[RMDB]
RNA sequence: GGGAACGACUCGAGUAGAGUCGAAAAACGAGUCCGUACGCGGACUCGAAGGGCCCCAGAAGACCAAGGGGCCCAAACCUACCACUCAUUAGAUGCAUGGAAAUCACUCGGUGAUACGUCACCUAGAACACGCUUUUAAGCUUCGGCUUAAAAGCAAGACAAGCAUGACGUUCGCGUCAUGCUUGUCAAAAGAAACAACAACAACAAC
Reactivity to 2A3 in 0.01 (KOAc 150mM, MgCl2 10mM, bicine 150mM(pH8.5), 24C), signal-to-noise 1, nucleotides 027 to 156: a000c010g000a030g010u030c020c010g000u020a030c240g000c020g090g000a000c000u000c000g000a000a020g000g000g000c010c000c000c010a140g110a210a030g070a170c090c160a190a120g000g000g000g000c000c000c000a010a010a010c000c000u010a020c000c100a050c060u110c000a120u070u190a080g050a050u100g000c140a050u030g050g110a100a080a040u100c030a070c080u040c030g000g000u010g020a000u030a140c160g090u010c000a010c000c000u000a010g030a070a050c160a020c090g000c000u000u000u000u000a000a000g000c020u030u060c190g030g020c000u010u000a000a000a000a010g000c010a010a000